Chemical mapping of a 177-nucleotide RNA with DMS and 2A3.

[RMDB]
RNA sequence: GGGAACGACUCGAGUAGAGUCGAAAACUGCGUUCAUCUAUACAGAAUGCUCACCGAAAUGCGUGACAUUAACCACGGCCCCAUGGGCUUCUACUUCGCCAUGGGCUAUGGUGCUCCAGCCAUCGUCCGUGCUAUGGCUAUUCGUAGCCAUAGCACGAAAAGAAACAACAACAACAAC
Reactivity to DMS in 0.01 (KOAc 150mM, MgCl2 10mM, bicine 150mM(pH8.5), 24C), signal-to-noise 2, nucleotides 027 to 126: c110u000g010c070g010u000u000c080a110u010c150u030a110u000a160c190a100g000a050a030u000g000c030u000c050a120c020c030g000a060a110a040u020g000c070g040u000g010a060c130a050u010u010a100a080c060c010a040c040g000g010c090c030c020c050a060u000g000g000g010c080u000u010c080u010a120c230u010u020c110g010c030c020a070u000g010g000g000c050u000a030u010g000g010u020g000c080u000c040c060a120g020c040c040a050u000c070g010u000c080
Reactivity to 2A3 in 0.01 (KOAc 150mM, MgCl2 10mM, bicine 150mM(pH8.5), 24C), signal-to-noise 3, nucleotides 027 to 126: c020u020g010c010g030u050u070c030a120u020c070u140a140u040a150c060a090g090a030a010u030g010c030u030c030a040c010c000g130a180a170a090u140g010c050g060u040g010a040c050a100u110u020a050a020c010c000a010c060g030g030c030c020c010c000a040u050g030g010g080c020u070u050c030u120a160c040u090u090c060g010c040c000a020u040g000g010g000c010u010a020u030g010g000u030g010c010u050c030c000a020g000c040c010a060u050c020g100u020c030
Conditions: 150 mM KOAc, 10 mM MgCl2 and 150 mM bicine (pH 8.5), 24 C. DMS adducts were read by reverse transcription with MarathonRT. Values cover nucleotides 27 to 126.